[RMDB]
RNA sequence: GGGAACGACUCGAGUAGAGUCGAAAAUUCUAGAAGCCCAAGAAGAUGUCCUCCUGCUAGACGCGCAGGCCCAGGCUAAGGACUCAGAAGAUGCAGCCAAAGUGGAAGGUGGGUGCCAGACACAGCAGUAACGAUCAUGGUUCGCCAUGAUCGUUACAAAAGAAACAACAACAACAAC
Reactivity to DMS in 0.01 (KOAc 150mM, MgCl2 10mM, bicine 150mM(pH8.5), 24C), signal-to-noise 1, nucleotides 027 to 126: u010u000c050u000a050g040a070a250g060c000c050c030a140a050g010a110a070g020a040u030g000u000c020c010u000c030c020u010g010c000u000a050g010a100c280g000c160g000c070a040g010g010c080c030c080a130g010g010c050u010a130a050g010g020a050c040u010c090a050g000a150a100g000a070u030g000c090a040g000c040c050a040a060a130g020u000g000g010a100a040g010g020u020g010g010g010u010g020c070c020a020g010a030c110a010c150a030g010c050a110